The record gives the reactivity of an RNA of 177 nucleotides to 2A3 and DMS. The reactions ran in a buffer of 150 mM KOAc, 10 mM MgCl2 and 150 mM bicine (pH 8.5), at 24 C. The data come from the RNA Mapping Database (RMDB), library OK2TST. The 2A3 profile rests on 1,466 reads.
[RMDB]
RNA sequence: GGGAACGACUCGAGUAGAGUCGAAAAGAGCGCUUCGGCGACCUGCAUGGUGUCGACAGUGCGGCCGUCGACGUAGUCCAUCAGCACCAGCGGCACCUCGGCGUAGCGGGCGUCGGUGGUGCUGCCAUGACGCACUGGAUUUCGAUCCAGUGCGUCAAAAAGAAACAACAACAACAAC
Reactivity to 2A3 in 0.01 (KOAc 150mM, MgCl2 10mM, bicine 150mM(pH8.5), 24C), signal-to-noise 1, nucleotides 027 to 126: g040a000g000c020g000c060u020u020c030g030g000c040g080a070c010c030u050g040c040a030u070g070g000u140g130u200c140g020a100c080a040g030u010g000c000g000g050c020c010g010u010c040g000a020c040g030u080a040g050u040c010c030a100u090c010a020g060c030a040c040c000a070g080c010g000g000c010a010c000c010u100c010g050g010c150g060u050a060g120c030g020g110g010c000g000u010c010g000g180u050g000g000u010g020c000u000g000c010c020a130
Reactivity to DMS in 0.01 (KOAc 150mM, MgCl2 10mM, bicine 150mM(pH8.5), 24C), signal-to-noise 1, nucleotides 027 to 126: g000a100g010c020g060c080u000u010c050g010g000c010g010a030c020c000u030g070c120a060u020g000g000u010g010u000c160g030a060c090a160g010u010g060c040g000g010c020c020g050u010c010g000a020c040g000u000a080g010u000c030c030a060u030c030a040g000c070a040c040c020a030g010c000g000g030c000a020c010c010u000c090g030g010c080g000u000a080g000c110g030g010g030c040g030u000c000g010g000u000g000g010u000g000c000u010g000c100c080a100